The record gives the reactivity of an RNA of 207 nucleotides to DMS and 2A3. The reactions ran in a buffer of 150 mM KOAc, 10 mM MgCl2 and 150 mM bicine (pH 8.5), at 24 C.
RNA sequence: GGGAACGACUCGAGUAGAGUCGAAAACAUUGUUCUGAUCAUCUGAAGAUCAGCUAUUAGAAGAGAAAGCUCAGUUAAGUCCUUUGGACCUGAUCAGCUUGAUACAAGAACUACUGAUUUCAACUUCAAAACGGGUGCUACUUCGGUAGCACCCGAACGUUCUUGAAAUCUUCGGAUUUCAAGAACGAAAAGAAACAACAACAACAAC
Reactivity to DMS in 0.01 (KOAc 150mM, MgCl2 10mM, bicine 150mM(pH8.5), 24C), signal-to-noise 1, nucleotides 027 to 156: c060a150u000u010g010u010u000c030u020g000a160u000c020a160u000c060u000g010a100a090g000a050u030c000a070g010c030u000a060u020u000a120g020a130a300g020a210g020a220a070a030g020c000u010c040a120g010u010u000a080a080g040u000c000c020u070u000u040g010g000a020c000c030u000g000a090u000c060a030g000c020u000u000g000a300u000a130c030a080a110g000a060a070c040u020a000c010u010g010a080u000u000u000c050a030a240c010u000u030c060a020a040a120a190c020g030g010g040u000g020c010u000a000c030u000u000c300g060g000u000a000g030c000a040c020c000c000g000a000a010
Reactivity to 2A3 in 0.01 (KOAc 150mM, MgCl2 10mM, bicine 150mM(pH8.5), 24C), signal-to-noise 3, nucleotides 027 to 156: c060a040u140u200g020u140u050c020u010g010a010u020c010a020u040c030u130g090a140a060g000a070u000c020a020g010c010u100a120u280u140a070g020a120a010g010a010g080a110a080a030g040c010u010c040a010g030u050u270a130a030g010u050c000c040u100u130u290g020g000a020c000c010u010g040a060u070c040a000g070c040u060u060g020a050u050a130c060a090a010g010a080a040c020u100a030c020u070g030a100u040u040u100c090a110a030c040u110u080c110a040a050a040a020c010g000g000g000u000g020c000u000a000c000u010u050c100g060g000u000a000g010c000a000c010c010c000g000a000a000